Description
Chemical mapping of a 177-nucleotide RNA with 2A3 and DMS. For DMS, 2,336 sequencing reads were counted. DMS adducts were read by reverse transcription with MarathonRT. The data come from the RNA Mapping Database (RMDB), library OK2TRN. 2A3 adducts were read by reverse transcription with SuperScript II with manganese.
[RMDB]
RNA sequence: GGGAACGACUCGAGUAGAGUCGAAAAGCAGCCGGACCCGGGCGUCGGCCUCGGCGACAUGCGGUGCCGCGGCAUCCGGGUCUGUGUAGACGGCGACGGUGCCGAGCCCCAGCCGGCGGCAGGUGGCGUAAUAGUGGGCUUUCGAGCCCACUAUUACAAAAGAAACAACAACAACAAC
Reactivity to 2A3 in 0.01 (KOAc 150mM, MgCl2 10mM, bicine 150mM(pH8.5), 24C), signal-to-noise 1, nucleotides 027 to 126: g000c020a010g070c010c020g120g020a070c000c010c000g040g010g040c050g090u110c030g070g060c020c010u040c060g090g040c020g090a050c100a120u300g090c080g160g000u060g000c020c000g060c020g030g000c020a000u080c000c010g000g010g000u010c020u030g020u030g020u020a060g050a110c010g030g050c020g000a050c060g110g000u120g070c040c020g010a050g000c000c000c030c000a010g060c050c000g020g000c000g050g010c060a040g000g170u100g020g070c040
Reactivity to DMS in 0.01 (KOAc 150mM, MgCl2 10mM, bicine 150mM(pH8.5), 24C), signal-to-noise 2, nucleotides 027 to 126: g000c060a150g000c040c010g020g000a050c010c020c080g010g010g010c130g040u000c080g010g030c040c040u010c040g020g010c020g010a120c130a110u010g010c130g010g020u010g010c000c010g020c090g020g010c020a040u010c010c010g000g000g000u000c000u010g000u000g030u000a050g010a160c060g010g010c010g000a100c190g020g010u000g030c020c030g010a130g000c060c010c020c040a220g010c010c010g000g030c020g030g000c040a060g010g020u010g000g010c170